This 177-nucleotide RNA was probed chemically with DMS and 2A3. Source: RMDB library VIROID, as collected in RNAgym. The DMS profile rests on 1,002 reads. The RNA was probed in 150 mM KOAc, 10 mM MgCl2 and 150 mM bicine (pH 8.5) at 24 C. 2A3 adducts were read by reverse transcription with SuperScript II with manganese.
RNA sequence: GGGAACGACUCGAGUAGAGUCGAAAACCUUCAAAAAUGACCGGAGGGGGAGCUAGGAGCGUGGGGGACCCAGUGGAGCCAUGGGAUGCUUCUCCCGAUUCCCUCCAACCCCACUCCCAGAAGGGUCGAUUAUACCGUACUUCGGUACGGUAUAAUCAAAAGAAACAACAACAACAAC
Reactivity to DMS in 0.01 (KOAc 150mM, MgCl2 10mM, bicine 150mM(pH8.5), 24C), signal-to-noise 2, nucleotides 027 to 126: c020c000u010u000c090a030a040a100a090a090u000g000a050c050c050g000g000a290g020g000g010g010g000a060g060c110u010a100g000g000a030g000c230g050u000g000g010g030g020g000a080c070c040c030a060g040u000g040g010a010g020c140c060a190u020g000g000g010a230u000g000c140u000u000c010u000c030c030c030g010a140u000u000c030c040c000u010c020c020a130a140c040c030c000c000a140c010u010c010c000c020a080g020a020a250g000g010g010u000c030
Reactivity to 2A3 in 0.01 (KOAc 150mM, MgCl2 10mM, bicine 150mM(pH8.5), 24C), signal-to-noise 2, nucleotides 027 to 126: c000c000u070u100c020a130a090a060a030a050u160g010a040c030c050g050g010a070g000g130g020g000g000a020g050c090u230a060g080g010a050g040c060g040u220g010g000g030g000g000a020c000c020c030a030g030u080g060g050a040g040c020c040a120u080g080g040g040a030u080g070c040u040u060c000u000c050c000c000g000a020u030u020c020c000c000u020c000c000a020a060c010c030c010c000a070c010u000c010c010c000a000g020a040a060g040g000g000u010c020